[RMDB]
RNA sequence: GGGAACGACUCGAGUAGAGUCGAAAAGAAAAUAGCGUACAGCACACUCAGACUGUACGCUAAGUAAGUGUGUGUUCAAUAAGGUCCAAUAGAACACACACUCCGUUGGACCAAGAGUGUGAAAAAACCAUCCAGUUAAGUUCGCUUAACUGGAUGGAAAAGAAACAACAACAACAAC
Reactivity to DMS in 0.01 (KOAc 150mM, MgCl2 10mM, bicine 150mM(pH8.5), 24C), signal-to-noise 3, nucleotides 027 to 126: g020a100a070a070a150u000a000g000c000g010u000a000c000a020g020c070a030c000a020c040u010c010a180g020a140c010u000g000u000a000c040g000c000u000a000a040g000u000a090a050g010u000g010u000g010u000g000u000u000c020a100a060u020a040a140g010g000u000c010c030a090a110u010a080g000a010a010c010a000c000a010c000a000c000u000c030c090g010u010u010g010g020a010c010c050a070a110g000a020g000u000g010u010g000a000a060a050a050a060a100
Reactivity to 2A3 in 0.01 (KOAc 150mM, MgCl2 10mM, bicine 150mM(pH8.5), 24C), signal-to-noise 3, nucleotides 027 to 126: g110a010a160a040a030u070a000g010c000g000u020a000c000a000g020c020a010c000a010c090u020c010a040g060a300c020u010g000u010a010c000g000c000u000a010a000g040u080a090a000g000u010g000u000g000u000g020u010u020c180a210a150u190a220a080g030g010u000c000c020a040a020u080a140g010a010a000c010a000c000a000c000a000c020u030c030c040g160u090u130g030g000a010c010c000a040a030g010a000g020u050g000u100g070a080a050a010a030a000a020